Overview: The record gives the reactivity of an RNA of 207 nucleotides to DMS and 2A3. Values cover nucleotides 27 to 156. Source: RMDB library M2RFPK, as collected in RNAgym. Conditions: 150 mM KOAc, 10 mM MgCl2 and 150 mM bicine (pH 8.5), 24 C.

RNA sequence: GGGAACGACUCGAGUAGAGUCGAAAAGUUCCCUCUUAGCGUGGAGGUUUAACUACGCUCGUUCCCCAUAUCGGUGUGUGCGCACCGGAUUUAUAAAUCAAAGUCCUUUAGGGAACGGAAAGGAACAAAAAUCCAUGGGAGUUCGCUCCCAUGGAAAGGACCAUACAAAGUUCGCUUUGUAUGGUCCAAAAGAAACAACAACAACAAC
Reactivity to DMS in 0.01 (KOAc 150mM, MgCl2 10mM, bicine 150mM(pH8.5), 24C), signal-to-noise 2, nucleotides 027 to 156: g010u000u000c020c000c010u010c070u010u000a030g010c010g060u010g020g030a130g030g010u000u010u000a100a170c050u000a010c020g020c010u000c010g000u000u000c020c020c000c060a210u000a080u010c020g020g020u000g040u000g040u020g000c050g010c000a040c020c020g020g000a050u000u000u000a070u000a100a120a110u000c120a110a080a210g000u000c000c040u000u000u000a100g000g020g010a070a080c070g020g010a050a080a040g020g010a060a120c040a020a050a100a070a190u010c000c000a080u000g020g000g020a020g040u000u020c300g010c030u000c000c000c000a000u020g000g010a000a010a100
Reactivity to 2A3 in 0.01 (KOAc 150mM, MgCl2 10mM, bicine 150mM(pH8.5), 24C), signal-to-noise 2, nucleotides 027 to 156: g010u020u030c000c000c000u010c010u000u050a000g000c010g000u000g010g010a040g000g090u040u230u180a050a060c000u020a010c010g010c000u010c000g000u010u000c000c010c040c000a020u040a040u090c020g000g000u010g000u020g030u060g130c180g000c030a000c000c000g020g000a000u010u100u030a180u050a080a190a030u160c160a080a090a010g080u040c010c000u100u110u150a050g030g090g000a030a050c050g020g000a030a030a000g040g000a070a040c040a000a120a030a000a050u000c000c010a050u000g000g030g000a000g000u070u100c090g000c070u000c000c000c000a000u000g000g010a000a000a000